[RMDB]
RNA sequence: GGGAACGACUCGAGUAGAGUCGAAAACUUUGCAGGAGGCAGUUAUGAGACGUGAAGAUGAGUAUCUUGUAAAGAGGGAUAGGAGAAUUGGAGGGCAAGUUUGGUGCCAGCAGCCGCGGUAAUACCGGUAGCAGGAAUAGUUCGCUAUUCCUGCUACAAAAGAAACAACAACAACAAC
Reactivity to DMS in 0.01 (KOAc 150mM, MgCl2 10mM, bicine 150mM(pH8.5), 24C), signal-to-noise 4, nucleotides 027 to 126: c020u000u020u030g010c060a080g000g020a080g020g030c080a060g020u020u010a060u010g000a080g010a060c080g000u000g010a060a050g010a060u030g010a140g000u020a060u000c000u000u000g000u010a030a040a110g010a110g000g000g000a110u010a050g020g010a080g000a100a110u020u000g000g010a110g000g010g000c070a030a050g000u010u010u010g010g010u010g010c010c050a040g010c050a060g020c020c040g000c030g000g000u010a050a070u040a300c030c010g000
Reactivity to 2A3 in 0.01 (KOAc 150mM, MgCl2 10mM, bicine 150mM(pH8.5), 24C), signal-to-noise 5, nucleotides 027 to 126: c010u030u050u130g010c040a030g000g060a010g030g000c030a020g030u070u060a200u120g080a070g020a040c080g040u090g060a050a050g020a070u080g020a010g070u090a070u070c020u010u040g050u130a020a080a050g030a050g030g020g040a050u080a070g040g010a070g070a080a170u100u060g040g000a070g030g020g000c040a060a020g030u040u090u100g040g000u030g040c030c000a000g000c020a000g010c010c000g030c020g000g010u050a060a030u070a170c000c020g050